[RMDB]
RNA sequence: GGGAACGACUCGAGUAGAGUCGAAAAUGGGCUACCAGUAAGCGAACAAUGAUACAGGACGAAAAAAACAUAAUUCGAGAUUUUUCAGGAUGGAUUUUUUUAGGUAUCUAUCAAAACUAUUCUGAUGCAACGUAGAGCACGUUCGCGUGCUCUACAACAAAGUAAAUACCUUCGGGUAUUUACUUUGAAAAGAAACAACAACAACAAC
Reactivity to DMS in 0.01 (KOAc 150mM, MgCl2 10mM, bicine 150mM(pH8.5), 24C), signal-to-noise 2, nucleotides 027 to 156: u010g000g010g030c020u000a100c040c020a180g000u000a060a110g020c010g000a100a090c050a060a150u000g000a140u000a080c030a090g000g020a080c060g020a020a010a040a140a120a030a110c040a060u000a040a130u000u000c030g010a150g010a140u000u010u010u000u020c000a030g050g000a020u010g000g020a020u000u020u000u000u070u000u020a010g030g000u000a100u010c000u010a050u000c000a030a040a030a030c010u010a040u000u000c010u020g010a040u000g020c130a080a080c130g020u000a010g000a030g000c000a020c030g010u000u000c230g020c010g030u000g000c000u000c000u000a010c000a050a070
Reactivity to 2A3 in 0.01 (KOAc 150mM, MgCl2 10mM, bicine 150mM(pH8.5), 24C), signal-to-noise 3, nucleotides 027 to 156: u090g010g030g000c020u040a090c040c020a020g040u050a050a000g040c030g030a050a020c030a060a110u090g020a010u090a110c050a070g080g010a030c060g050a080a010a040a000a000a020a000c030a050u150a110a070u120u070c030g010a010g040a200u090u190u050u070u090c010a000g000g000a010u010g000g020a040u040u000u000u070u000u000u010a020g030g010u190a070u250c000u020a010u020c000a000a000a000a020c000u010a010u020u010c000u000g030a030u050g050c020a050a070c100g000u000a000g000a000g000c000a000c000g000u020u030c140g010c000g090u000g000c000u010c000u000a000c000a000a000

This 207-nucleotide RNA was probed chemically with DMS and 2A3. DMS (dimethyl sulfate) methylates the pairing face of unpaired adenines and cytosines. It was measured as part of the RMDB library M2RFOK. Conditions: 150 mM KOAc, 10 mM MgCl2 and 150 mM bicine (pH 8.5), 24 C. For DMS, 3,113 sequencing reads were counted.